[RMDB]
RNA sequence: GGGAACGACUCGAGUAGAGUCGAAAACACACAGCGUAUAUUGCAGCAUACUACAAUCGCCAAACACCUCCGAUAUGGUGCGAUCAUGAUUGUUUUUAUUCCUGCAAUCGGUGUGUAUGGGCUCUUGUAUGCCGGUAUUGCAUCAAUAAUGGAAAUACGUAAGAAGUGUUUUCGAACACUUCUUACGAAAAGAAACAACAACAACAAC
Reactivity to 2A3 in 0.01 (KOAc 150mM, MgCl2 10mM, bicine 150mM(pH8.5), 24C), signal-to-noise 8, nucleotides 027 to 156: c040a000c010a000c020a030g120c060g070u190a140u030a020u190u040g000c030a010g000c010a010u010a030c000u010a000c020a030a010u010c020g040c070c060a050a090a020c010a010c010c020u160c070c090g090a070u050a100u300g010g000u010g010c030g080a100u130c030a030u190g020a020u000u040g030u020u030u010u010u120a080u040u060c020c010u020g000c000a010a010u040c020g030g050u000g010u000g000u010a090u140g030g020g020c020u040c000u100u090g060u110a040u090g030c000c020g010g020u140a100u090u180g030c020a040u030c030a070a110u160a120a080u120g070g050a040a070a060u180a080
Reactivity to DMS in 0.01 (KOAc 150mM, MgCl2 10mM, bicine 150mM(pH8.5), 24C), signal-to-noise 3, nucleotides 027 to 156: c030a090c030a050c040a070g020c050g010u000a080u000a030u010u010g010c000a020g040c160a090u000a020c030u000a020c000a010a030u000c010g020c050c080a190a230a020c020a020c000c010u000c170c200g030a250u020a090u000g010g000u010g030c000g010a180u000c140a050u000g000a050u000u000g000u010u000u010u000u000a030u020u000c040c000u000g020c030a030a030u000c020g010g020u000g040u000g030u000a050u000g010g020g030c030u000c070u010u010g010u000a060u010g020c020c000g040g050u010a050u000u000g000c000a110u010c050a080a120u010a040a140u000g000g000a070a050a130u000a110

Chemical mapping of a 207-nucleotide RNA with 2A3 and DMS.
For 2A3, 7,183 sequencing reads were counted.
DMS adducts were read by reverse transcription with MarathonRT.
It was measured as part of the RMDB library OK3TST.